RNA sequence: GGGAACGACUCGAGUAGAGUCGAAAAGAUAUGGAUAGUCCCAUGGAGAUGUGGGUCGGAAACGACCCAUACAUCUAUGAAGUGGCGACUAUCCUAAGUCAAAUCCGCAGGGUUCGCCCUGCGGAAACGAUAAAGCCAACUUCGGUUGGCUUUAUCGAAAAGAAACAACAACAACAAC
Reactivity to DMS in 0.01 (KOAc 150mM, MgCl2 10mM, bicine 150mM(pH8.5), 24C), signal-to-noise 1, nucleotides 027 to 126: g020a070u010a300u030g000g010a010u010a010g010u000c000c000c000a030u010g000g020a010g020a040u000g010u000g000g000g020u000c000g000g000a060a100a270c010g000a020c000c010c000a040u020a060c050a040u000c010u000a260u010g020a150a290g000u000g000g060c210g040a040c000u000a000u000c000c000u000a000a060g010u010c040a070a090a120u010c000c000g010c010a000g000g020g060u000u010c300g030c000c000c030u000g020c030g010g000a000a000a030
This 177-nucleotide RNA was probed chemically with DMS. The RNA was probed in 150 mM KOAc, 10 mM MgCl2 and 150 mM bicine (pH 8.5) at 24 C.